[RMDB]
Chemical mapping of a 177-nucleotide RNA with DMS.
Reactivities are given for positions 27 through 126.
DMS adducts were read by reverse transcription with MarathonRT.
It was measured as part of the RMDB library OK2TST.
RNA sequence: GGGAACGACUCGAGUAGAGUCGAAAAAUGACCACAGGUUAUGCACUGCACUAUUUGGCUAAUAAUAGAGAGCAAAUAAAAAGUUACGACUACGUGCUAGUGGAUGAGUGCCACGUUAUGGAUGCUAAUAGGGAUCAGUUUUCGAACUGAUCCCUAUAAAAGAAACAACAACAACAAC
Reactivity to DMS in 0.01 (KOAc 150mM, MgCl2 10mM, bicine 150mM(pH8.5), 24C), signal-to-noise 2, nucleotides 027 to 126: a060u030g010a220c020c010a130c110a090g020g020u000u000a050u000g010c020a050c040u000g000c020a090c070u010a050u000u000u000g000g010c020u000a040a040u030a110a060u000a140g000a080g010a070g000c010a060a030a040u010a010a100a030a110a070g000u000u000a090c150g000a090c060u010a080c110g030u000g000c040u000a070g010u020g000g000a050u010g000a090g000u000g020c040c020a010c130g010u000u000a040u000g000g000a060u000g030c050u010a050